[RMDB]
RNA sequence: GGGAACGACUCGAGUAGAGUCGAAAACUACAUAGUUUCGACUAUGUAGAAACCAUUAGGAAGCAUGCAGAUGGAUAUGGACGAGGGCAACUAACCUAUUGCGAACAGCAGGUUUCGACCUGCUGAAUAGCAUAGGGUACUUCGGUACCCUAUGCUAAAAAGAAACAACAACAACAAC
Reactivity to 2A3 in 0.01 (KOAc 150mM, MgCl2 10mM, bicine 150mM(pH8.5), 24C), signal-to-noise 1, nucleotides 027 to 126: c010u010a000c000a000u020a000g010u020u050u100c240g080a000c000u000a020u020g010u000a010g010a010a050a000c010c000a030u090u160a120g080g010a060a000g000c040a000u060g000c040a010g040a100u020g040g030a020u010a050u250g020g000a040c070g000a070g030g020g030c000a020a020c020u030a000a010c040c000u040a160u080u210g040c000g090a080a060c020a000g000c000a000g010g000u020u000u250c220g050a080c000c000u000g050c000u000g020a010a010
Reactivity to DMS in 0.01 (KOAc 150mM, MgCl2 10mM, bicine 150mM(pH8.5), 24C), signal-to-noise 1, nucleotides 027 to 126: c010u000a000c000a020u010a030g010u000u010u010c160g020a060c000u010a010u010g000u000a000g030a080a080a170c010c040a080u000u020a080g010g000a100a070g010c030a020u010g020c070a080g010a100u010g000g000a060u010a010u010g000g010a040c050g000a100g010g010g000c070a020a060c100u000a080a020c050c020u000a070u000u000g010c070g020a050a190c020a000g000c000a010g000g000u000u000u020c140g020a030c000c000u000g000c010u000g000a060a040